The data come from the RNA Mapping Database (RMDB), library OK2TST. Chemical mapping of a 177-nucleotide RNA with DMS and 2A3. For 2A3, 11,615 sequencing reads were counted. For DMS the reverse transcriptase was MarathonRT.
RNA sequence: GGGAACGACUCGAGUAGAGUCGAAAACGACUGCGAAUAAGGAUUCUACGGUCAGAGCUCGAGAGUAAUAUCGAGGAUCCUUACAAGGAUCCAACGAGGAUCCAAGGAGAGCUACCGCUGCAAUGAAUAGAGAUGUAUGAUUCGUCAUACAUCUCUAAAAAGAAACAACAACAACAAC
Reactivity to DMS in 0.01 (KOAc 150mM, MgCl2 10mM, bicine 150mM(pH8.5), 24C), signal-to-noise 9, nucleotides 027 to 126: c110g010a100c100u010g010c120g000a090a140u010a070a080g010g000a090u000u000c010u000a120c040g010g010u000c150a120g000a190g010c020u000c070g020a150g010a110g020u000a070a160u010a070u000c010g010a170g010g000a020u000c000c000u000u010a070c260a110a100g000g000a010u000c000c010a050a070c140g000a100g000g010a060u000c020c030a070a150g010g010a090g000a070g010c040u000a110c070c040g010c080u000g010c090a050a070u000g010a080a150
Reactivity to 2A3 in 0.01 (KOAc 150mM, MgCl2 10mM, bicine 150mM(pH8.5), 24C), signal-to-noise 7, nucleotides 027 to 126: c030g080a040c050u060g020c060g060a070a070u090a080a040g040g010a020u040u000c020u090a170c020g000g010u040c090a020g020a020g090c010u030c060g140a140g000a000g100u090a070a090u040a030u150c010g000a010g010g000a010u010c000c000u020u070a050c030a040a070g010g000a000u000c010c010a010a090c060g030a060g020g010a010u000c000c010a020a030g130g030a100g000a010g000c020u030a050c000c040g040c050u070g010c040a050a160u190g040a100a040